[RMDB]
RNA sequence: GGGAACGACUCGAGUAGAGUCGAAAAGAGGGCCGCGGUGCUCUGGAGUAGAGGCUCUGCCUUCGAGACACCAUCGAUCGUCCCUUCUUCUUUACCUUCUUCUGGCUCUUCUUGGAGACGCGACCGGUGGCACCCCUGCUCGGUUCGCUCCAACCUGCAAACGAGGAUUCUUCGGAAUCCUCGUUUGAAAAGAAACAACAACAACAAC
Reactivity to 2A3 in 0.01 (KOAc 150mM, MgCl2 10mM, bicine 150mM(pH8.5), 24C), signal-to-noise 2, nucleotides 027 to 156: g040a030g000g000g010c000c030g040c080g040g010u070g040c000u020c000u020g050g040a120g020u110a050g040a060g000g000c040u030c190u300g030c030c000u040u140c020g050a080g050a020c010a010c100c000a020u010c050g060a150u050c010g010u020c030c000c000u000u080c010u020u000c010u030u070u160a140c010c030u010u090c000u090u050c040u080g040g010c020u030c020u250u020c040u040u060g050g000a060g010a150c050g010c050g020a000c000c020g010g020u070g050g000c040a090c000c010c050c000u000g040c050u070c030g040g030u090u030c000g000c010u000c000c000a010a040c000c000u070g020